[RMDB]
RNA sequence: GGGAACGACUCGAGUAGAGUCGAAAACAUGGUGGCAAGUACGGCGCGAUAUUGCGCCACCUGCAAUAGAAGCGUAGACAUCAACUGUAGCGAGAGCUACUCAACUUAUGGACCUUAGAGCAAGCGAAGACGACUGGUCCUGUCGGAAUUCGCUAGACCACUGGACUGAUUUCGAUCAGUCCAGUGGAAAAGAAACAACAACAACAAC
Reactivity to DMS in 0.01 (KOAc 150mM, MgCl2 10mM, bicine 150mM(pH8.5), 24C), signal-to-noise 2, nucleotides 027 to 156: c030a090u000g030g050u020g030g080c030a070a160g020u010a090c100g040g070c030g040c000g000a280u000a120u010u000g000c000g050c040c030a030c090c040u000g000c020a030a080u000a030g020a160a140g030c030g000u030a050g050a120c030a140u010c050a040a070c020u000g000u010a030g020c050g030a260g010a280g020c000u000a020c000u010c120a080a110c050u000u050a090u000g030g040a080c030c010u010u020a160g020a170g020c020a090a100g000c020g000a280a070g000a110c050g010a080c050u000g050g020u000c010c020u000g000u000c020g000g000a120a160u000u000c020g010c030u010a090g020a220
Reactivity to 2A3 in 0.01 (KOAc 150mM, MgCl2 10mM, bicine 150mM(pH8.5), 24C), signal-to-noise 3, nucleotides 027 to 156: c010a040u090g020g010u020g060g000c020a020a030g030u080a050c120g040g000c010g010c010g120a130u050a100u170u260g010c020g000c000c010a000c000c000u020g000c010a030a050u040a080g110a090a010g040c020g050u040a040g050a090c020a070u100c030a050a120c040u040g000u030a000g000c000g020a010g000a000g070c000u000a000c030u050c020a060a180c000u080u140a060u180g050g020a060c000c020u070u070a050g030a030g150c020a090a000g000c000g010a020a000g060a010c020g000a000c010u050g020g050u030c000c040u010g000u000c030g010g010a050a100u000u010c000g010c000u030a040g030a110

Structure probing data (DMS and 2A3) for a 207-nucleotide construct. The data come from the RNA Mapping Database (RMDB), library OK3TST. 2A3 adducts were read by reverse transcription with SuperScript II with manganese. DMS adducts were read by reverse transcription with MarathonRT. Conditions: 150 mM KOAc, 10 mM MgCl2 and 150 mM bicine (pH 8.5), 24 C. For DMS, 2,089 sequencing reads were counted.